RNA sequence: GGGAACGACUCGAGUAGAGUCGAAAACAUCCAUGAGCCAAAUAUUUGGAAGAGGGAUAUCCAGUCUAGUGUUCUGUAACCCCCACAUACCAAGGAUGCUGGGCUCAGUUGAAUCUCUAUGAGAAGCAUCCCUUGGUACUUUCGAGUACCAAGGGAUAAAAGAAACAACAACAACAAC
Reactivity to DMS in 0.01 (KOAc 150mM, MgCl2 10mM, bicine 150mM(pH8.5), 24C), signal-to-noise 2, nucleotides 027 to 126: c200a110u010c050c050a140u010g010a120g000c000c040a080a040a060u010a070u000u000u010g000g000a130a130g020a140g020g010g010a050u000a280u010c100c030a010g010u020c040u010a050g050u010g000u000u000c010u030g000u030a090a200c050c030c000c000c020a030c210a130u000a130c040c110a040a020g000g030a020u050g000c070u000g000g000g000c000u000c080a070g000u000u030g020a120a120u000c010u000c020u010a100u010g010a070g040a070a080g000c210
The data come from the RNA Mapping Database (RMDB), library OK2TRN. The record gives the reactivity of an RNA of 177 nucleotides to DMS. Reactivities are given for positions 27 through 126. The RNA was probed in 150 mM KOAc, 10 mM MgCl2 and 150 mM bicine (pH 8.5) at 24 C. For DMS the reverse transcriptase was MarathonRT.